[RMDB]
RNA sequence: GGGAACGACUCGAGUAGAGUCGAAAAUCAGAUAGAUGGCUUAUACAUUCCGAAACUCGAAGAGGAGCGGAUAGUAUCAAUUUUGGAAUGGGAUCGUUCAUCAGAACCGGAGCAUAGAUUGGAGGCGACUUUCGAUCUCUUUCGAGAGAUCGAAAGUAAAAGAAACAACAACAACAAC
Reactivity to DMS in 0.01 (KOAc 150mM, MgCl2 10mM, bicine 150mM(pH8.5), 24C), signal-to-noise 3, nucleotides 027 to 126: u000c100a040g010a090u010a050g030a060u000g000g000c070u020u000a130u020a050c000a270u020u000c000c010g020a030a040a040c050u000c020g000a170a130g020a080g030g000a030g030c030g000g010a030u000a110g000u010a120u000c180a090a120u000u000u020u010g000g010a070a030u010g020g000g010a060u010c060g000u000u000c020a050u010c100a040g010a060a060c090c020g000g000a050g020c050a040u020a030g000a080u010u000g000g000a070g020g000c070g020
Reactivity to 2A3 in 0.01 (KOAc 150mM, MgCl2 10mM, bicine 150mM(pH8.5), 24C), signal-to-noise 3, nucleotides 027 to 126: u150c020a030g080a150u160a020g030a020u030g100g000c000u090u000a010u010a060c040a090u010u010c000c000g020a170a040a010c030u030c050g160a230a150g040a180g160g020a020g030c000g060g000a030u000a190g010u050a040u140c060a150a130u060u050u050u180g080g040a050a050u040g000g000g100a030u060c050g020u080u050c040a080u040c050a030g010a030a020c020c000g030g020a030g000c000a080u040a070g110a060u010u140g050g000a010g030g070c050g000
Record summary: Structure probing data (DMS and 2A3) for a 177-nucleotide construct. The 2A3 profile rests on 1,320 reads. Conditions: 150 mM KOAc, 10 mM MgCl2 and 150 mM bicine (pH 8.5), 24 C. The data come from the RNA Mapping Database (RMDB), library OK1LIB. The DMS profile rests on 3,356 reads. Reactivities are given for positions 27 through 126.